Chemical mapping of a 177-nucleotide RNA with DMS. The reactions ran in a buffer of 150 mM KOAc, 10 mM MgCl2 and 150 mM bicine (pH 8.5), at 24 C. The DMS profile rests on 1,651 reads. Source: RMDB library OK2TRN, as collected in RNAgym.

RNA sequence: GGGAACGACUCGAGUAGAGUCGAAAACAAAUGCAGGAGCUUUUCUCAUCAGAAAGAAUUGAUUGGACCAAACAGCAGGAAGAGCUUCUCUCACAGUUGAAUGUCCUUGAAAAGCAGCUUCAAGAGAUGGCAGUAGUAUAUUCGUAUACUACUGCCAAAAAGAAACAACAACAACAAC
Reactivity to DMS in 0.01 (KOAc 150mM, MgCl2 10mM, bicine 150mM(pH8.5), 24C), signal-to-noise 3, nucleotides 027 to 126: c040a070a100a100u010g030c250a030g010g000a010g010c020u000u000u000u000c000u000c120a060u000c100a100g010a070a120a100g020a090a090u010u000g010a060u000u010g000g010a100c060c110a090a090a110c100a060g040c100a090g020g010a090a030g000a020g000c050u000u000c030u020c030u010c120a070c110a100g000u000u000g010a090a050u000g030u000c000c000u000u000g000a030a020a130a110g000c070a060g010c070u000u000c030a050a060g010a160g030a100